[RMDB]
RNA sequence: GGGAACGACUCGAGUAGAGUCGAAAAGAUAUGGAGCUGACACGCCGACUCGACGAAGCUUGAGUCUUAUUCGGAAACGAAUAAGACUCAAGCAGAGAGUCGGAACUACGUGCCAGCUCCUAAGUCACGAGAAAGUAUUGUUCGCAAUACUUUCUCGAAAAGAAACAACAACAACAAC
Reactivity to DMS in 0.01 (KOAc 150mM, MgCl2 10mM, bicine 150mM(pH8.5), 24C), signal-to-noise 4, nucleotides 027 to 126: g000a060u010a300u010g010g000a010g020c000u010g010a030c010a000c000g020c010c010g000a040c000u010c000g000a300c280g000a130a090g000c000u000u000g010a020g010u000c000u000u000a000u000u000c000g000g000a170a130a220c000g010a020a000u000a000a000g010a000c010u000c010a010a000g010c000a010g000a190g000a030g000u000c000g030g000a040a030c100u010a300c020g000u000g020c000c000a020g000c010u000c000c000u000a000a050g040u000c070a300
Source information: Structure probing data (DMS) for a 177-nucleotide construct.